Source information:
This 207-nucleotide RNA was probed chemically with 2A3.
RNA sequence: GGGAACGACUCGAGUAGAGUCGAAAAGUGUUUCAUGCAGCCUGCUUCCUUAGUUGAUCUGUUCACAAGAUCACAUCAAGUAAUUUCUUCCAUUCUGGGAAGAUGGCGAAAACAAACAGAUACUGUCAGCAGAUGUUGAUGAACCACCUUUCCAGAAAGCGCUGUUAUAGUUCGCUAUAACAGCGCUAAAAGAAACAACAACAACAAC
Reactivity to 2A3 in 0.01 (KOAc 150mM, MgCl2 10mM, bicine 150mM(pH8.5), 24C), signal-to-noise 2, nucleotides 027 to 156: g040u010g050u020u030u030c000a000u060g190c010a020g070c000c030u010g010c020u030u050c030c000u110u120a080g040u090u080g020a000u000c000u000g040u130u130c140a110c060a280a020g010a050u030c010a020c000a100u120c070a090a050g020u110a080a140u030u030u060c030u010u000c040c030a100u140u100c060u210g030g000g010a010a010g010a030u010g000g000c060g020a070a060a000a000c030a040a080a020c000a020g030a060u120a180c030u080g060u130c020a000g000c000a010g080a110u140g040u060u010g000a040u020g020a040a000c000c000a000c000c010u000u000u000c000c010a000g040a040a090
For 2A3 the reverse transcriptase was SuperScript II with manganese. The reactions ran in a buffer of 150 mM KOAc, 10 mM MgCl2 and 150 mM bicine (pH 8.5), at 24 C.